This 177-nucleotide RNA was probed chemically with 2A3 and DMS. It was measured as part of the RMDB libraries RFM100 and RFMREP. Reactivities are given for positions 27 through 126.
RNA sequence: GGGAACGACUCGAGUAGAGUCGAAAAUCCUUGCUGGUUUGGAUUUUGAUUAUAAUCCUGUUGUGUCCUCGAUUACGGGACGCACUGAGUCUGUUUCCUUUGGUGAAGUCUAUGCGCAACUGCUGAGACAUUCAUUAACUUUCGAGUUAAUGAAUGUAAAAGAAACAACAACAACAAC
Reactivity to 2A3 in 0.01 (KOAc 150mM, MgCl2 10mM, bicine 150mM(pH8.5), 24C), signal-to-noise 9, nucleotides 027 to 126: u000c010c000u010u070g080c080u100g040g140u100u100u090g030g000a010u000u010u050u080g120a120u050u180a090u150a180a080u050c000c020u030g070u170u020g000u040g010u010c010c020u110c070g180a280u130u210a110c110g010g000g000a000c000g000c000a020c020u040g000a010g020u030c080u210g040u040u040u030c000c000u030u070u110g060g010u060g040a060a030g010u010c020u050a080u110g020c030g000c050a080a100c070u090g000c010u030g040a020g010
Reactivity to DMS in 0.01 (KOAc 150mM, MgCl2 10mM, bicine 150mM(pH8.5), 24C), signal-to-noise 9, nucleotides 027 to 126: u010c010c000u000u010g020c080u010g010g000u000u010u010g010g000a040u000u000u000u000g010a120u020u010a100u020a090a110u010c040c080u000g010u010u010g030u000g010u000c010c000u010c100g020a220u020u030a100c210g000g000g000a010c010g010c010a010c080u010g010a040g010u000c020u020g010u000u000u000c000c000u010u010u010g010g010u010g000a070a100g000u000c030u010a070u010g000c050g010c090a080a100c120u010g010c030u000g000a140g000
Annotation
2A3 adducts were read by reverse transcription with SuperScript II with manganese. The reactions ran in a buffer of 150 mM KOAc, 10 mM MgCl2 and 150 mM bicine (pH 8.5), at 24 C.